[RMDB]
RNA sequence: GGGAACGACUCGAGUAGAGUCGAAAACUUAGUGAGUUCGCUCACUAAGGGACUCUGGAACCCAGGCUGGAGAGGGAGCAAGUAGGAGGCUGGGCACCACCAACAUUCAGCGCUUCGGCGCUGAAAAUCAAGUAGAACAAUUCGUUGUUCUACUUGAAAAAGAAACAACAACAACAAC
Reactivity to 2A3 in 0.01 (KOAc 150mM, MgCl2 10mM, bicine 150mM(pH8.5), 24C), signal-to-noise 5, nucleotides 027 to 126: c000u000u000a000g000u000g010a000g010u040u120c190g100c110u000c000a000c000u000a000a010g010g000g000a020c020u010c040u100g060g050a050a050c000c010c000a020g060g020c030u050g040g030a090g010a070g080g020g000a070g030c060a110a030g070u060a040g070g090a010g020g020c030u020g040g030g010c020a020c010c010a020c000c020a030a060c000a060u040u020c000a000g010c000g000c000u050u060c260g090g000c000g000c000u000g000a000a000a000a020
Reactivity to DMS in 0.01 (KOAc 150mM, MgCl2 10mM, bicine 150mM(pH8.5), 24C), signal-to-noise 6, nucleotides 027 to 126: c000u000u000a000g010u000g010a030g020u000u010c220g020c010u000c000a000c000u000a010a010g000g000g010a120c090u000c030u000g010g010a100a110c050c010c020a080g010g010c060u000g000g010a080g010a080g000g000g000a050g010c060a050a090g010u010a070g010g000a080g010g020c050u000g000g010g000c060a090c070c050a100c070c060a070a070c140a140u000u000c000a010g010c000g020c000u000u000c200g030g000c000g010c000u000g000a000a010a070a100